The data come from the RNA Mapping Database (RMDB), library M2PK50. This 177-nucleotide RNA was probed chemically with DMS. The DMS profile rests on 1,845 reads. The reactions ran in a buffer of 150 mM KOAc, 10 mM MgCl2 and 150 mM bicine (pH 8.5), at 24 C. For DMS the reverse transcriptase was MarathonRT. DMS (dimethyl sulfate) methylates the pairing face of unpaired adenines and cytosines.
RNA sequence: GGGAACGACUCGAGUAGAGUCGAAAAACUGCCUGUUUCGACAGGCAGUAGUCUACUACGCGCAACCGCCGAGUCGUUCCCGCGGUUGCGUGAAGUAGUUUGAUAUGAUCUUAUUCGUAAGAUCAAACAAGCAGAGAAUCUUCGGAUUCUCUGCUUGAAAAGAAACAACAACAACAAC
Reactivity to DMS in 0.01 (KOAc 150mM, MgCl2 10mM, bicine 150mM(pH8.5), 24C), signal-to-noise 1, nucleotides 027 to 126: a070c010u010g020c000c000u000g010u000u000u000c130g010a030c000a010g000g000c020a010g020u000a010g020u020c000u000a000c000u000a080c020g000c000g000c000a010a000c010c010g000c010c220g000a160g010u000c000g010u000u010c010c000c000g020c020g010g010u000u000g010c000g040u000g010a060a030g020u000a000g010u010u000u000g000a140u010a110u000g000a010u000c000u000u000a030u000u000c150g030u000a000a000g000a020u000c000a030a090a210